Chemical mapping of a 177-nucleotide RNA with 2A3 and DMS. The DMS profile rests on 24,934 reads.
RNA sequence: GGGAACGACUCGAGUAGAGUCGAAAAAGGCUAUUAGCGUAGAAUGUGAAAUCCCGCGACUCGACUGCAGGCGUGCAGCCGAUACGAGCACGCUGUAGGAACGUAAUCGAGAAUGCACAGCGGACGCAAAUUUAUUAAAAUUCGUUUUAAUAAAUUUAAAAGAAACAACAACAACAAC
Reactivity to 2A3 in 0.01 (KOAc 150mM, MgCl2 10mM, bicine 150mM(pH8.5), 24C), signal-to-noise 8, nucleotides 027 to 126: a000g160g010c070u100a130u260u210a140g010c010g020u030a030g080a270a160u080g030u040g060a080a060a080u060c010c000c000g010c000g020a020c010u020c020g000a010c010u000g000c010a080g140g150c000g010u000g000c010a040g080c050c080g040a060u100a190c110g020a020g000c000a000c000g000c000u000g000u010a010g010g060a100a070c110g070u140a040a040u050c000g000a000g030a110a060u110g030c040a030c030a060g030c020g080g020a010c010g000c000
Reactivity to DMS in 0.01 (KOAc 150mM, MgCl2 10mM, bicine 150mM(pH8.5), 24C), signal-to-noise 8, nucleotides 027 to 126: a080g000g010c050u000a070u030u010a090g020c030g010u010a050g010a100a100u020g010u000g010a080a080a090u010c030c000c010g010c080g000a140c020u010c020g000a080c010u000g010c010a060g000g010c020g010u000g010c000a180g020c080c110g010a090u030a060c140g000a150g000c020a020c000g000c000u000g010u010a030g000g020a100a090c160g010u020a070a130u010c000g000a050g000a120a090u010g000c050a050c040a040g000c100g000g000a040c040g000c050
Source: RMDB library OK1LIB, as collected in RNAgym. The RNA was probed in 150 mM KOAc, 10 mM MgCl2 and 150 mM bicine (pH 8.5) at 24 C. The 2A3 profile rests on 7,140 reads. For 2A3 the reverse transcriptase was SuperScript II with manganese.